[RMDB]
RNA sequence: GGGAACGACUCGAGUAGAGUCGAAAAGAAAUUGAAGUUUUGGAAUUGGAGAGCAUUAUGCUAAAUGAAAUAAGCCAAACACAGAAAGACAAAUAUCACAUGUUCUCACUUAUCUGUGAAAUAUAAAACAAUUACAUUCUUAGCAGUAAAGAGUAGACUGUAUAUCUGGUUUCGACCAGAUAUACAGAAAAGAAACAACAACAACAAC
Reactivity to DMS in 0.01 (KOAc 150mM, MgCl2 10mM, bicine 150mM(pH8.5), 24C), signal-to-noise 2, nucleotides 027 to 156: g010a040a120a100u000u000g020a050a250g080u000u010u000u000g000g000a100a110u000u010g000g020a150g010a070g010c010a040u000u010a080u010g000c040u000a040a090a140u000g030a070a090a080u000a060a140g040c010c110a060a090a190c030a060c010a010g000a050a120a060g060a180c040a040a070a110u000a060u000c050a010c180a120u020g020u000u000c040u000c030a150c040u000u010a140u000c040u000g000u020g020a110a050a120u000a130u000a120a050a080a080c050a050a150u000u010a080c030a060u000u000c080u000u000a070g000c010a030g000u010a040a050a050g000a100g000u000a050g030a210
Reactivity to 2A3 in 0.01 (KOAc 150mM, MgCl2 10mM, bicine 150mM(pH8.5), 24C), signal-to-noise 3, nucleotides 027 to 156: g020a030a050a000u090u080g030a050a050g040u040u020u110u140g070g030a080a090u110u020g030g020a020g000a010g020c040a030u060u110a050u210g010c040u040a040a040a080u070g050a000a050a120u120a070a010g020c030c000a020a010a020c010a000c000a030g030a010a050a010g040a020c050a050a070a020u170a060u180c080a050c030a160u100g020u120u030c020u020c040a040c030u050u110a170u170c000u000g030u000g030a030a100a000u110a020u050a050a110a010a000c040a020a050u150u100a070c020a050u030u110c020u060u130a020g030c030a030g020u170a050a110a000g070a010g020u080a040g050a050
Structure probing data (DMS and 2A3) for a 207-nucleotide construct. For 2A3, 1,532 sequencing reads were counted. The reactions ran in a buffer of 150 mM KOAc, 10 mM MgCl2 and 150 mM bicine (pH 8.5), at 24 C. It was measured as part of the RMDB library OK3TST. Values cover nucleotides 27 to 156.